An RNA of 177 nucleotides, treated with DMS and 2A3 and read out base by base. 2A3 adducts were read by reverse transcription with SuperScript II with manganese. Values are in units of 0.01, from 0 to 300, in steps of 10. Values cover nucleotides 27 to 126. Source: RMDB library TTRDES, as collected in RNAgym. The 2A3 profile rests on 3,483 reads. The reactions ran in a buffer of 150 mM KOAc, 10 mM MgCl2 and 150 mM bicine (pH 8.5), at 24 C.
RNA sequence: GGGAACGACUCGAGUAGAGUCGAAAAGAUAUGGAUCUUGUGGCUUCCUAGACAGUACAUCGGAAACGAUGUACCGAGAAGCACACGGGAUCCUAAGUCAAAACAAAGUCGCUUCGGCGACUUUGAACAAUGUGUAGUCCUUCGGGACUACACAUUGAAAAGAAACAACAACAACAAC
Reactivity to DMS in 0.01 (KOAc 150mM, MgCl2 10mM, bicine 150mM(pH8.5), 24C), signal-to-noise 4, nucleotides 027 to 126: g000a030u010a300u030g000g010a010u000c000u000u000g030u000g010g020c000u000u000c000c300u000a110g000a060c300a130g000u000a000c000a000u000c000g000g000a190a140a140c000g010a000u000g010u000a000c000c010g000a070g010a000a000g010c000a060c000a010c000g000g010g000a000u000c000c000u010a000a100g000u000c020a140a070a180a280c000a010a000a020g010u000c000g020c000u000u020c280g050g010c000g010a000c000u010u000u000g010a090a200
Reactivity to 2A3 in 0.01 (KOAc 150mM, MgCl2 10mM, bicine 150mM(pH8.5), 24C), signal-to-noise 2, nucleotides 027 to 126: g040a000u060a020u130g010g000a010u000c010u020u010g020u010g040g010c010u020u040c010c020u030a080g030a040c040a000g010u000a000c000a000u000c000g050g030a040a080a080c020g000a010u000g010u010a010c000c000g010a030g000a000a010g020c130a080c000a000c300g020g010g000a010u020c000c000u000a070a010g030u020c020a000a010a120a180c000a010a010a000g000u000c000g030c070u070u210c300g220g050c000g000a040c000u010u010u000g000a040a000